[RMDB]
This 177-nucleotide RNA was probed chemically with 2A3 and DMS. For 2A3, 2,562 sequencing reads were counted. Values cover nucleotides 27 to 126. For DMS, 1,155 sequencing reads were counted. Source: RMDB library M2PK50, as collected in RNAgym.

RNA sequence: GGGAACGACUCGAGUAGAGUCGAAAAGGAGUUAAGUUCGCUUAACUCCCACUACCGAGAAUGCGACUCGGUAUAUCGCAAUAACCCUUGGAAACAAGCGAACCACUGACGACUUCGGUCGUCAGAACUCUACGGGAAGGUUCGCCUUCCCGUAGAGAAAAGAAACAACAACAACAAC
Reactivity to 2A3 in 0.01 (KOAc 150mM, MgCl2 10mM, bicine 150mM(pH8.5), 24C), signal-to-noise 3, nucleotides 027 to 126: g020g000a000g000u000u010a030a000g010u010u070c090g030c090u000u020a000a010c000u010c010c000c000a040c010u020a020c000c010g010a000g030a120a140u300g100c130g160a060c030u000c000g000g000u000a010u020a000u020c010g000c040a050a030u080a100a110c010c000c050u020u120g140g040a060a100a080c010a110a030g000c000g020a020a040c020c020a070c060u000g000a000c000g000a000c010u040u050c230g100g000u000c000g010u000c000a000g000a000a000
Reactivity to DMS in 0.01 (KOAc 150mM, MgCl2 10mM, bicine 150mM(pH8.5), 24C), signal-to-noise 2, nucleotides 027 to 126: g020g000a030g030u000u000a000a000g020u000u000c200g010c000u010u000a000a050c010u000c000c000c090a110c110u000a040c000c020g000a030g000a110a070u010g020c300g020a100c010u000c010g010g000u000a020u000a000u000c090g010c050a110a110u000a070a110c030c000c000u000u000g010g000a130a100a100c120a090a040g000c000g010a050a030c140c130a210c010u000g000a000c000g000a030c000u000u020c220g030g000u000c000g000u000c010a000g000a050a120